[RMDB]
RNA sequence: GGGAACGACUCGAGUAGAGUCGAAAAUCCCAUUGGUAUUCGUACCAAUGGGAAAAAACCUUUGUGUGGUCUGCGUUGAAAGUACCUAGCCCAUUGGGCUAGGGUACUGGAGCAGCCACACUCUGGUAAAAUGCUGCCUCUAUUCGUAGAGGCAGCAGAAGGUUUGAUCGUUCGCGAUCAAACCUUCAAAAGAAACAACAACAACAAC
Reactivity to 2A3 in 0.01 (KOAc 150mM, MgCl2 10mM, bicine 150mM(pH8.5), 24C), signal-to-noise 1, nucleotides 027 to 156: u010c000c000c000a010u010u000g020g010u020a030u020u120c270g030u080a010c000c020a000a000u000g000g000g130a120a070a000a000a000a000c020c000u060u010u000g020u000g000u010g000g050u220c070u020g000c000g150u270u060g090a040a070a050g000u000a000c000c000u000a010g000c000c010c240a300u220u300g010g000g000c000u000a030g020g000g000u010a000c000u000g020g000a000g000c000a000g090c000c000a000c000a000c000u000c000u010g000g000u010a030a030a030a030u110g010c010u000g000c000c000u060c010u010a060u080u070c140g090u030a000g000a000g000g000c000a000g000c000a000